Chemical mapping of a 177-nucleotide RNA with 2A3 and DMS.

RNA sequence: GGGAACGACUCGAGUAGAGUCGAAAAUGACACCAAUCCUAGGUGCAUAGUGUCUACGUGCUGCCGCUUUGCGGCCAACGGCAUUUUGCUGUUGGAUGCUAAUUCGUUGGCAUCAGUAAUUGUGGCACAUCAGAGUACCCUUCGGGGUACUCUGAUGAAAAGAAACAACAACAACAAC
Reactivity to 2A3 in 0.01 (KOAc 150mM, MgCl2 10mM, bicine 150mM(pH8.5), 24C), signal-to-noise 6, nucleotides 027 to 126: u080g030a040c000a000c010c000a010a100u170c050c040u140a090g020g000u000g020c010a080u090a070g030u000g010u000c030u090a020c010g010u010g000c000u010g000c000c010g000c100u090u120u300g000c000g000g000c000c000a000a000c000g010g010c030a050u100u110u150u300g000c010u000g000u000u010g010g000a000u010g000c000u020a030a050u090u130c230g050u080u040g000g000c000a000u000c000a010g000u030a050a050u080u280g010u010g010g000c010a000
Reactivity to DMS in 0.01 (KOAc 150mM, MgCl2 10mM, bicine 150mM(pH8.5), 24C), signal-to-noise 3, nucleotides 027 to 126: u020g010a190c010a020c010c000a030a170u020c050c040u020a070g010g020u000g030c140a140u030a070g010u000g010u000c010u020a020c010g010u000g000c010u000g010c000c010g010c020u020u010u030g000c000g000g000c020c010a000a000c000g010g040c000a200u010u020u020u030g020c010u000g010u000u010g000g030a030u010g000c000u000a000a040u020u040c190g010u020u000g000g010c000a020u010c000a030g020u010a020a040u000u020g020u000g000g000c000a030
The reactions ran in a buffer of 150 mM KOAc, 10 mM MgCl2 and 150 mM bicine (pH 8.5), at 24 C.